The record gives the reactivity of an RNA of 207 nucleotides to 2A3 and DMS. The 2A3 profile rests on 1,317 reads. For 2A3 the reverse transcriptase was SuperScript II with manganese. The reactions ran in a buffer of 150 mM KOAc, 10 mM MgCl2 and 150 mM bicine (pH 8.5), at 24 C.

RNA sequence: GGGAACGACUCGAGUAGAGUCGAAAAGGAUCCUGAGUUGGAAAGGAAAAGAGAGAGAGAUUCCCCUGGAUGGAGCAGAAAGGAAAAGGUGAAAAAUAAACCCCAAACUUUGGGCUUACCACCUGGCUGGCUAACCAAACUAUGCUACCAGUGUAGGCCAUUAGAUGCUAUUCGUAGCAUCUAAUGGAAAAGAAACAACAACAACAAC
Reactivity to 2A3 in 0.01 (KOAc 150mM, MgCl2 10mM, bicine 150mM(pH8.5), 24C), signal-to-noise 2, nucleotides 027 to 156: g020g000a040u030c010c010u100g030a100g060u070u080g050g050a120a090a070g030g020a040a040a170a000g070a000g000a000g030a000g000a010g010a080u070u090c050c010c000c020u020g010g020a050u020g030g020a010g010c000a010g050a030a080a020g000g060a000a070a000a000g010g010u020g090a060a060a000a050a020u090a080a080a030c020c020c020c000a000a040a100c080u140u030u040g020g020g010c020u030u050a040c010c030a010c030c000u000g030g020c100u040g010g000c020u050a040a030c030c040a010a080a030c050u050a020u170g010c010u020a050c010c020a030g010u030g040u130a090g010g040
Reactivity to DMS in 0.01 (KOAc 150mM, MgCl2 10mM, bicine 150mM(pH8.5), 24C), signal-to-noise 2, nucleotides 027 to 156: g000g000a070u000c000c000u010g000a140g030u000u000g000g000a080a080a070g010g010a080a040a080a130g010a120g040a140g000a130g000a070g010a160u000u000c020c000c000c070u010g010g040a050u000g000g010a090g040c030a050g000a080a080a080g010g000a080a010a070a050g000g030u000g010a050a090a090a070a150u000a030a060a090c020c000c010c040a020a080a090c110u000u000u020g010g010g010c050u000u000a040c000c000a040c010c010u010g000g000c050u000g050g020c010u010a090a130c070c030a080a110a080c090u000a110u040g010c010u000a050c030c020a070g030u000g000u010a080g000g000
About this RNA:
For DMS the reverse transcriptase was MarathonRT.